[RMDB]
RNA sequence: GGGAACGACUCGAGUAGAGUCGAAAAGCGUUGGCGGAACGUACGGAAACCAUCCCCCAUCCGAAACGUACGUCUAGAAUCAAUCCACACUCGCGGAACUCGCGAGUCAUGCAUGCGAAAGGAUGGCGUAGGACAGUAAUAGGCGGCGCAUAUGUAGGAUUUGGGAAGAAUUCGUUCUUCCCAAAUCAAAAGAAACAACAACAACAAC
Reactivity to DMS in 0.01 (KOAc 150mM, MgCl2 10mM, bicine 150mM(pH8.5), 24C), signal-to-noise 2, nucleotides 027 to 156: g010c030g030u000u000g010g010c010g030g020a060a040c030g030u010a100c000g020g000a130a110a090c030c010a080u000c020c010c010c020c020a070u000c050c030g000a060a100a100c020g020u010a050c000g010u000c000u000a130g020a100a140u000c070a030a170u000c030c030a090c020a050c000u010c000g020c020g030g000a110a150c170u010c010g000c010g000a030g000u000c030a030u010g000c030a080u010g030c030g020a120a110a150g010g020a050u000g020g010c030g010u000a090g020g010a100c030a070g010u000a060a060u000a090g000g010c030g000g030c020g000c050a100u000a070u000g010u000a120g030
Reactivity to 2A3 in 0.01 (KOAc 150mM, MgCl2 10mM, bicine 150mM(pH8.5), 24C), signal-to-noise 3, nucleotides 027 to 156: g060c050g030u030u090g050g000c040g040g000a100a020c030g010u030a030c020g040g080a210a110a130c100c030a300u220c020c020c000c020c000a000u020c000c000g100a160a070a040c030g000u060a010c000g010u000c010u020a050g040a100a080u090c010a050a050u040c080c010a040c000a010c070u000c000g000c010g010g060a150a120c040u040c130g010c000g000a000g020u000c010a010u040g020c000a000u060g000c010g080a100a010a000g010g000a010u020g020g000c020g060u070a040g020g030a010c040a030g030u070a040a120u050a090g010g000c010g000g010c000g000c060a040u060a050u200g060u070a070g060